Structure probing data (2A3) for a 207-nucleotide construct. Conditions: 150 mM KOAc, 10 mM MgCl2 and 150 mM bicine (pH 8.5), 24 C.
RNA sequence: GGGAACGACUCGAGUAGAGUCGAAAAAGCAGGACCGCGUUACCACGCGGUCCUGCAGCAAUGAGUAGAAGCGGUCAAAUUUGGUGUCGAGUUCCAACAAACCAAAUUCGGGCAUUGCUCACUGCAAAAAACUCUCUUUAGUUCGCUAAAGAGAGAAGUAUAUAUAACACUUCGGUGUUAUAUAUACAAAAGAAACAACAACAACAAC
Reactivity to 2A3 in 0.01 (KOAc 150mM, MgCl2 10mM, bicine 150mM(pH8.5), 24C), signal-to-noise 1, nucleotides 027 to 156: a000g000c010a000g000g010a000c000c000g110c100g120u040u300a230c210c170a020c070g010c000g000g030u000c000c000u010g000c000a000g000c000a000a030u020g000a000g010u030a030g030a060a050g080c050g000g030u050c020a020a010a000u030u000u010g020g010u050g110u120c140g090a120g090u090u200c090c020a070a020c030a070a200a010c020c000a000a000a000u030u020c020g020g000g030c020a030u090u000g010c000u000c000a000c040u020g000c000a000a000a000a070a070a100c030u050c030u030c000u000u010u010a020g000u060u050c240g010c170u010a010a000a000g000a000g000a000g010a000a000
Description
It was measured as part of the RMDB library M2RFPK.